Structure probing data (2A3 and DMS) for a 177-nucleotide construct. The DMS profile rests on 1,620 reads. DMS adducts were read by reverse transcription with MarathonRT. High 2A3 reactivity points to a flexible backbone, as in loops and unpaired stretches.
RNA sequence: GGGAACGACUCGAGUAGAGUCGAAAAGGUAUCCACUUCGGUGGAUACCAAAGGCGAUCCCAGCAUCAGGGAACAACAAGAAUAGAUGCAUCCCUAACGCCAAAAUUCCGGAUUUCGAUCCGGAAAACAUCUCACGUAGUUUCGACUACGUGAGAUGAAAAGAAACAACAACAACAAC
Reactivity to 2A3 in 0.01 (KOAc 150mM, MgCl2 10mM, bicine 150mM(pH8.5), 24C), signal-to-noise 3, nucleotides 027 to 126: g000g000u000a000u010c000c000a010c010u050u080c170g110g000u000g000g000a000u000a000c010c000a000a040a010g000g000c010g020a060u030c010c000c010a020g040c010a010u040c040a010g070g000g050a070a110c040a050a030c030a140a130g120a250a100u110a120g030a040u020g010c020a080u030c010c000c000u030a070a010c010g000c010c000a050a120a010a030u050u010c000c000g000g020a020u020u070u090c160g090a020u020c000c000g000g000a010a000a000a010
Reactivity to DMS in 0.01 (KOAc 150mM, MgCl2 10mM, bicine 150mM(pH8.5), 24C), signal-to-noise 2, nucleotides 027 to 126: g040g000u000a010u000c000c000a010c020u000u000c130g060g000u000g020g000a010u000a010c010c000a020a030a070g020g030c060g000a170u000c000c000c000a100g030c070a040u020c060a080g020g000g010a040a110c150a050a070c160a080a100g010a130a080u010a100g000a050u000g000c040a110u000c010c000c000u010a250a150c040g000c000c000a120a080a100a140u010u000c000c000g010g010a060u000u000u000c200g000a030u010c000c000g000g000a000a010a040a190